[RMDB]
RNA sequence: GGGAACGACUCGAGUAGAGUCGAAAACUCGUCAUCGAUCAAAUACCCGACCGCGAGGGGGAGCUGUUCGUCCCGGUCGAGCUGGACAUCGACGCCGUAUCCCACCUGCAGUACACCUCGGGCUCGAGGGAUGUGAUGAAUUCGUUCAUCACAUCCCAAAAGAAACAACAACAACAAC
Reactivity to DMS in 0.01 (KOAc 150mM, MgCl2 10mM, bicine 150mM(pH8.5), 24C), signal-to-noise 2, nucleotides 027 to 126: c060u000c000g030u000c060a060u010c000g020a040u000c060a100a030a080u000a120c020c040c030g020a070c010c000g020c130g000a070g030g000g030g030g000a080g030c130u000g010u010u000c050g020u000c050c020c040g010g000u010c000g000a030g040c060u000g000g010a080c140a060u000c060g030a060c030g030c050c020g000u000a060u020c010c020c000a170c110c080u000g000c070a040g030u010a080c100a100c060c000u000c020g020g000g020c090u020c030g010a210
Reactivity to 2A3 in 0.01 (KOAc 150mM, MgCl2 10mM, bicine 150mM(pH8.5), 24C), signal-to-noise 2, nucleotides 027 to 126: c020u010c010g010u020c010a080u020c050g050a050u030c050a110a050a040u120a090c040c010c000g020a030c020c030g050c070g060a130g010g010g010g020g010a050g010c080u050g080u220u060c080g060u000c090c000c000g050g030u040c020g000a010g010c040u060g030g020a020c030a070u050c040g030a030c030g020c020c020g060u040a170u060c010c000c000a060c020c020u040g000c040a020g000u040a030c000a070c030c020u030c010g000g030g040c010u030c050g020a050

Source: RMDB library OK2TST, as collected in RNAgym. An RNA of 177 nucleotides, treated with DMS and 2A3 and read out base by base. 2A3 adducts were read by reverse transcription with SuperScript II with manganese. The RNA was probed in 150 mM KOAc, 10 mM MgCl2 and 150 mM bicine (pH 8.5) at 24 C. For DMS the reverse transcriptase was MarathonRT.